[RMDB]
RNA sequence: GGGAACGACUCGAGUAGAGUCGAAAACACUACUACAAGACCUUCGAGGACCUGCGGGACAAGAUUCUUGGUGCCGUCAAUGAGAACUCCAGGAUUGUCCUGCAGAUCAACAAUGCCUGUCUGGCUGCUGUUACAGGUUGUUCGCAACCUGUAACAGAAAAGAAACAACAACAACAAC
Reactivity to DMS in 0.01 (KOAc 150mM, MgCl2 10mM, bicine 150mM(pH8.5), 24C), signal-to-noise 1, nucleotides 027 to 126: c070a080c030u000a060c060u020a030c080a130a070g010a120c060c080u000u000c110g000a170g030g000a020c010c000u000g000c010g010g000g000a030c000a110a060g000a070u010u010c010u040u000g020g010u000g010c140c090g040u010c140a160a100u010g000a150g030a110a120c030u000c000c040a030g000g000a060u000u000g000u000c000c000u010g050c010a000g000a020u000c010a030a080c190a070a070u010g000c070c010u000g000u010c100u000g000g020c050u000g000
Reactivity to 2A3 in 0.01 (KOAc 150mM, MgCl2 10mM, bicine 150mM(pH8.5), 24C), signal-to-noise 2, nucleotides 027 to 126: c010a010c010u170a020c020u050a060c040a150a050g070a130c020c030u030u090c100g090a070g070g050a000c010c000u000g000c000g000g000g000a000c000a020a040g030a300u120u030c010u000u000g000g010u020g020c000c030g070u120c040a070a220u300g060a080g010a160a080c050u050c010c000a000g020g000a020u010u010g020u020c000c030u000g000c000a000g010a010u000c000a000a050c020a040a040u080g000c010c020u140g020u250c050u050g030g000c040u070g000
Overview: This 177-nucleotide RNA was probed chemically with DMS and 2A3. The RNA was probed in 150 mM KOAc, 10 mM MgCl2 and 150 mM bicine (pH 8.5) at 24 C.